An RNA of 177 nucleotides, treated with 2A3 and DMS and read out base by base.
RNA sequence: GGGAACGACUCGAGUAGAGUCGAAAAGGGGCGAAAGACUAAUCGAACAACCUAGUAGCUGGUUCCUUCCGAAGUUUCCCUCAGGAUAGCUGGAGCAGUAUUCUAGUUUCAUCUUGUAAAGACAAUGCUAAAUAUCUGAUUUCGAUCAGAUAUUUAGAAAAGAAACAACAACAACAAC
Reactivity to 2A3 in 0.01 (KOAc 150mM, MgCl2 10mM, bicine 150mM(pH8.5), 24C), signal-to-noise 9, nucleotides 027 to 126: g020g000g010g020c050g080a110a030a020g050a060c050u070a070a090u110c070g070a120a050c030a040a060c050c010u020a040g030u040a010g050c030u040g060g000u030u050c010c000u030u040c040c030g070a070a010g010u010u030u010c000c000c000u020c020a010g020g000a020u020a030g010c020u020g010g010a020g020c100a050g110u110a100u130u030c020u030a010g000u010u040u070c040a040u000c000u020u030g050u150a050a070a010g040a040c050a080a090u190g040
Reactivity to DMS in 0.01 (KOAc 150mM, MgCl2 10mM, bicine 150mM(pH8.5), 24C), signal-to-noise 9, nucleotides 027 to 126: g010g000g000g010c040g010a080a090a070g000a100c050u010a050a080u020c090g010a140a100c180a100a120c150c070u010a060g000u010a030g010c030u010g010g010u000u000c010c010u000u010c080c050g010a090a100g000u010u000u000c000c010c100u000c040a020g000g000a020u000a030g010c020u000g000g000a020g020c200a140g010u030a110u020u010c010u010a020g000u000u010u020c120a030u000c000u000u010g010u020a050a060a070g010a100c210a080a090u050g000

The RNA was probed in 150 mM KOAc, 10 mM MgCl2 and 150 mM bicine (pH 8.5) at 24 C. 2A3 is a SHAPE reagent: it acylates the 2'-hydroxyl of flexible nucleotides of all four kinds. DMS (dimethyl sulfate) methylates the pairing face of unpaired adenines and cytosines. DMS adducts were read by reverse transcription with MarathonRT.